[RMDB]
RNA sequence: GGGAACGACUCGAGUAGAGUCGAAAAAGCAGGAGUACGCUCCUGCAUGGGUAGACGAAUUGACCCCAACUGAAGUUCAAUUCUAACGUUAAAAGGAGUUUUAUAUGACUGGACGUACGCGUGCAGAUGACGAUUUCAUUCUUCGGAAUGAAAUCAACUUAUGUAUAAUCUUCGGAUUAUACAUAAGAAAAGAAACAACAACAACAAC
Reactivity to DMS in 0.01 (KOAc 150mM, MgCl2 10mM, bicine 150mM(pH8.5), 24C), signal-to-noise 2, nucleotides 027 to 156: a100g030c000a050g000g010a030g090u000a070c300g050c010u000c040c000u000g000c010a080u000g020g020g000u000a090g020a160c080g000a070a060u000u000g010a040c030c020c010c030a060a270c130u000g000a040a050g020u000u000c050a030a050u000u000c020u000a100a080c030g000u000u000a100a080a080a130g020g020a250g030u030u000u000u000a120u000a070u020g000a110c000u010g030g010a120c060g030u000a050c140g040c030g030u000g000c020a120g000a130u000g000a100c090g000a020u000u010u010c010a010u000u000c020u000u030c280g030g000a020a000u000g000a010a000a000u000c000a030a070
Reactivity to 2A3 in 0.01 (KOAc 150mM, MgCl2 10mM, bicine 150mM(pH8.5), 24C), signal-to-noise 5, nucleotides 027 to 156: a000g010c000a000g000g020a010g010u060a040c180g040c080u010c000c000u010g020c000a010u010g010g020g020u140a120g050a160c060g000a020a000u010u010g000a000c000c000c020c010a060a090c190u300g010a020a010g020u070u010c000a000a000u000u000c000u090a130a060c100g040u080u170a030a060a050a070g130g020a080g010u030u030u100u080a170u050a070u180g090a040c000u010g000g080a000c000g000u040a030c180g020c030g090u070g070c010a000g020a090u090g060a070c130g000a000u000u000u000c000a000u000u010c000u010u040c130g090g010a000a000u000g000a000a000a000u000c000a010a000